[RMDB]
RNA sequence: GGGAACGACUCGAGUAGAGUCGAAAACUGUGCUGUGUGGAAGUACGUGAGUACUUCACGCUCUACGGGAGUAGAGCCACACAGAUCGUGGAGCGAUGUCUUGGAACUACUCCCGUAGUUCACGUAUGACUCACGUCAUACCAAGACCACAGCCACGACCUCCCACGGCAUUCGUGCCGUGGGAGGUAAAAGAAACAACAACAACAAC
Reactivity to 2A3 in 0.01 (KOAc 150mM, MgCl2 10mM, bicine 150mM(pH8.5), 24C), signal-to-noise 1, nucleotides 027 to 156: c000u000g030u000g020c000u020g000u030g020u070g000g000a010a000g010u100a020c000g000u000g020a030g000u060a280c050u020u220c030a070c060g050c010u050c000u000a000c040g000g020g000a000g000u000a000g000a000g040c020c000a000c000a000c000a000g000a000u020c040g030u250g130g150a190g280c050g000a000u000g000u000c000u000u020g010g020a060a040c000u000a000c000u000c000c080c000g000u000a000g000u120u210c060a090c070g080u150a110u170g010a040c000u010c000a000c040g020u000c000a020u100a070c000c020a000a000g040a000c000c000a000c000a020g000c000c000a020c010g030